[RMDB]
The record gives the reactivity of an RNA of 177 nucleotides to 2A3 and DMS. The 2A3 profile rests on 7,111 reads. DMS adducts were read by reverse transcription with MarathonRT. Conditions: 150 mM KOAc, 10 mM MgCl2 and 150 mM bicine (pH 8.5), 24 C. The DMS profile rests on 4,321 reads. High 2A3 reactivity points to a flexible backbone, as in loops and unpaired stretches. 2A3 adducts were read by reverse transcription with SuperScript II with manganese.
RNA sequence: GGGAACGACUCGAGUAGAGUCGAAAAAAACGUGAGGACAAUCUGGCUGUGACAUCCAUCACCCCACUGAUCUCCAGCGUUGAUUCAGCUGAUCAGUGGGCUGAGCAGGUGUCCCCUUUCUCCCUCAGUAGGAGUAAAAGUUCGCUUUUACUCCUACAAAAGAAACAACAACAACAAC
Reactivity to 2A3 in 0.01 (KOAc 150mM, MgCl2 10mM, bicine 150mM(pH8.5), 24C), signal-to-noise 4, nucleotides 027 to 126: a000a000a000c120g060u080g010a080g000g010a010c030a060a120u060c070u080g170g020c070u060g090u100g040a020c010a080u040c030c000a020u020c030a010c000c000c000c000a000c010u000g010a020u010c080u050c180c060a020g000c020g050u070u120g080a180u300u100c050a050g000c000u010g000a000u000c000a000g000u010g000g000g000c000u030g000a010g010c030a020g020g000u000g010u000c020c000c000c010u000u070u020c060u010c020c000c000u020c000a030
Reactivity to DMS in 0.01 (KOAc 150mM, MgCl2 10mM, bicine 150mM(pH8.5), 24C), signal-to-noise 5, nucleotides 027 to 126: a030a040a040c170g020u020g000a050g020g010a090c110a070a050u000c100u000g010g030c160u010g010u010g010a030c060a050u020c120c090a200u000c010a020c300c000c000c000a010c010u000g000a010u000c050u000c200c130a040g000c040g010u000u010g010a200u010u000c070a070g030c010u000g000a040u000c000a020g020u000g000g000g020c070u000g000a030g010c140a110g000g010u000g000u000c000c010c010c010u000u000u000c070u000c020c010c020u010c070a130